[RMDB]
RNA sequence: GGGAACGACUCGAGUAGAGUCGAAAAGCGGGCUACUUAUACUUUGCCGUUAGCGCGAUAGCAUUUAUAAUGUACGCGUUAAUGAGUAGGAGGGCGUGAAGGUCGUGAAGAAGCUCGUGGCGUGAGCAAAAAAGCAGAACUUCGGUUCUGCUUUUUUAAAAGAAACAACAACAACAAC
Reactivity to 2A3 in 0.01 (KOAc 150mM, MgCl2 10mM, bicine 150mM(pH8.5), 24C), signal-to-noise 2, nucleotides 027 to 126: g060c010g000g000g050c000u060a010c000u160u050a040u040a100c000u190u040u120g010c000c010g010u000u000a000g000c020g020c030g060a110u140a040g000c020a030u000u070u140a180u140a140a010u030g000u020a000c000g000c000g010u020u000a000a000u020g030a090g010u020a090g030g080a010g000g050g010c020g050u060g090a090a060g120g010u070c020g030u040g070a000a050g000a040a000g030c030u070c020g010u010g010g030c050g050u140g030a040g080c060
Reactivity to DMS in 0.01 (KOAc 150mM, MgCl2 10mM, bicine 150mM(pH8.5), 24C), signal-to-noise 4, nucleotides 027 to 126: g010c050g010g010g020c020u000a050c030u000u000a100u040a100c050u020u020u020g010c020c000g010u000u000a000g000c020g010c010g020a130u030a140g010c000a020u000u000u070a090u030a100a040u010g010u010a070c000g010c000g020u000u000a000a010u000g000a120g020u000a030g000g030a100g000g000g020c040g030u010g010a110a080g010g020u010c040g010u010g000a060a050g000a150a070g000c010u000c020g020u010g000g000c030g030u010g000a090g000c060